[RMDB]
RNA sequence: GGGAACGACUCGAGUAGAGUCGAAAACCUAGUGUACUACGGUACACUAGGAAGUCGCGAGCUUCGGCUCGCGACAACAAUACGACUACGGUCGUAUUGAAAUACUUACCUGGCAGGGGAGAUACCAUGAUCACGAAGGUGGUUUUCCCAGGGCGAGGCUUAUCCAUUGCACUCCGGAUGUGCUGACCCCUGCGAUUUCCCCAAAUGUGGGAAACUCGACUGCAUAAUUUGUGGUAGUGGGGGACUGCGUUCGCGCUUUCCCCUGUAAUACGGUGUUCGCACCGUAUAAAAGAAACAACAACAACAAC
Reactivity to DMS in 0.01 (KOAc 150mM, MgCl2 10mM, bicine 150mM(pH8.5), 24C), signal-to-noise 3, nucleotides 027 to 266: c000c010u010a010g010u000g000u000a000c000u020a080c120g000g000u000a000c000a010c000u010a000g010g000a050a040g020u010c010g060c010g000a030g010c010u000u020c230g030g030c020u000c000g020c010g000a000c000a020a200c000a010a000u000a000c010g000a010c000u010a130c210g040g010u000c000g010u000a000u000u000g000a080a110a060u000a110c160u020u020a120c010c020u000g010g030c010a010g010g040g000g000a040g010a060u010a020c030c020a030u010g000a120u020c040a030c070g040a040a090g010g010u000g010g000u000u000u000u000c000c010c000a010g000g010g000c040g010a250g000g000c000u000u010a000u000c020c010a130u000u010g000c140a110c160u010c210c190g010g010a030u000g020u000g000c000u010g000a300c300c010c000c040u000g020c020g010a070u000u000u000c010c010c000c020a070a090a100u020g020u010g000g010g000a010a010a030c180u000c020g000a060c010u010g000c010a070u010a090a090u000u000u010g030u000g000g010u010a060g020u010g000g010g000g010g000a020c050u000g040c000g030u000u010c180g030c010g000c000u000u000u000c000c020c010c000u000g000u000a040
Reactivity to 2A3 in 0.01 (KOAc 150mM, MgCl2 10mM, bicine 150mM(pH8.5), 24C), signal-to-noise 3, nucleotides 027 to 266: c000c000u000a000g000u000g000u000a000c000u000a020c160g080g000u010a000c010a000c000u000a000g000g000a010a040g000u000c010g000c000g010a000g000c010u060u290c300g080g030c000u010c000g000c000g020a000c000a000a000c000a000a000u000a000c000g000a000c010u030a030c230g180g010u010c010g000u000a000u000u000g000a030a020a000u120a060c050u140u140a100c020c020u060g120g010c000a000g000g000g060g050a020g000a050u080a090c030c000a030u080g020a070u170c050a010c070g070a050a010g070g000u020g000g000u010u010u010u010c010c030c000a010g010g010g000c000g000a000g000g010c010u090u130a000u020c000c000a020u090u300g170c110a070c130u140c090c110g000g010a030u020g020u050g010c020u030g020a050c000c000c000c010u000g010c000g000a010u010u010u020c030c040c020c020a100a300a140u290g090u240g010g000g000a000a010a010c150u030c010g020a010c010u010g000c010a040u130a160a230u150u110u130g040u050g040g070u030a090g120u250g020g000g010g000g000a000c010u020g060c020g040u040u060c110g000c010g020c070u000u000u020c000c000c000c000u010g000u000a000